[RMDB]
RNA sequence: GGGAACGACUCGAGUAGAGUCGAAAAAAGUGUCAUGUCAUCACACCUUGUCACGGACACCUCAUUGUCACGCCAUCACCUUCGAUGACAUGGCAAUGACGUGUUAGUAACAAGACGUGAUGACGUGACACUUCGUAAACUCCGGUUCGCCGGAGAACUGCUAUUAACAGUUCGCUGUUAAUAGCAGAAAAGAAACAACAACAACAAC
Reactivity to 2A3 in 0.01 (KOAc 150mM, MgCl2 10mM, bicine 150mM(pH8.5), 24C), signal-to-noise 8, nucleotides 027 to 156: a010a000g000u000g000u000c000a000u010g000u000c000a000u000c000a000c000a010c030c000u010u000g000u010c020a010c020g030g000a000c000a000c000c010u000c000a000u000u000g000u010c000a000c020g010c020c000a010u010c000a050c100c170u300u300c160g000a000u000g010a010c000a010u010g000g000c000a000a000u000g000a000c010g000u000g000u010u010a020g000u010a010a010c010a000a000g030a020c090g000u000g000a000u000g000a000c000g000u000g010a000c000a000c000u010u000c000g000u020a020a020a030c000u000c000c000g010g020u060u040c220g040c040c000g000g000a000g000a010a020
Reactivity to DMS in 0.01 (KOAc 150mM, MgCl2 10mM, bicine 150mM(pH8.5), 24C), signal-to-noise 2, nucleotides 027 to 156: a000a030g030u010g010u000c000a000u000g010u010c010a020u010c010a000c010a060c020c000u010u000g000u000c000a020c000g030g010a030c010a010c010c020u010c000a000u000u000g020u020c000a010c040g020c010c000a020u000c010a270c280c250u000u000c150g010a030u010g020a000c020a060u000g010g000c000a020a000u010g020a010c050g000u000g040u000u000a050g030u010a050a020c000a020a020g010a060c030g050u010g010a010u000g010a000c010g040u000g000a020c010a000c000u000u000c030g030u000a100a100a120c020u000c010c000g010g000u000u000c270g050c020c010g020g010a020g020a030a060